[RMDB]
RNA sequence: GGGAACGACUCGAGUAGAGUCGAAAAAGCUCCAGGAGUGUCAUAGUGCAUUGCUGCAUUUAAAAGGUCCGUAGUCAGUGUUGACAGGGAUGCUAGAAGACACUUUCUUCAUGGAGUGUAUUGGCAUUGAUCCUAUCUCUUUCGAGAGAUAGGAUCAAAAAGAAACAACAACAACAAC
Reactivity to DMS in 0.01 (KOAc 150mM, MgCl2 10mM, bicine 150mM(pH8.5), 24C), signal-to-noise 4, nucleotides 027 to 126: a190g000c020u010c000c020a060g000g000a000g010u000g010u010c000a110u020a040g020u000g010c000a040u030u040g000c210u010g000c020a020u010u000u010a060a100a150a070g000g000u000c010c010g020u020a200g000u000c000a060g020u030g000u060u010g020a020c000a200g000g000g030a010u000g010c000u010a100g010a160a100g000a020c000a000c000u000u000u010c080u010u020c180a080u000g010g000a020g020u010g010u030a060u000u030g000g020c220a160u000
Reactivity to 2A3 in 0.01 (KOAc 150mM, MgCl2 10mM, bicine 150mM(pH8.5), 24C), signal-to-noise 5, nucleotides 027 to 126: a020g000c000u000c000c000a020g000g000a000g000u010g020u030c050a130u100a090g010u030g030c000a010u100u270g110c050u090g000c020a060u090u100u200a100a140a040a000g040g030u010c010c050g040u130a090g000u030c010a030g050u080g140u300u230g080a010c000a000g070g000g030a010u050g230c000u030a040g040a150a000g020a030c000a000c000u020u040u030c060u070u050c060a120u060g000g000a000g000u050g000u050a090u020u040g050g000c080a050u000
The record gives the reactivity of an RNA of 177 nucleotides to DMS and 2A3. Source: RMDB libraries RFM100 and RFMREP, as collected in RNAgym. 2A3 adducts were read by reverse transcription with SuperScript II with manganese.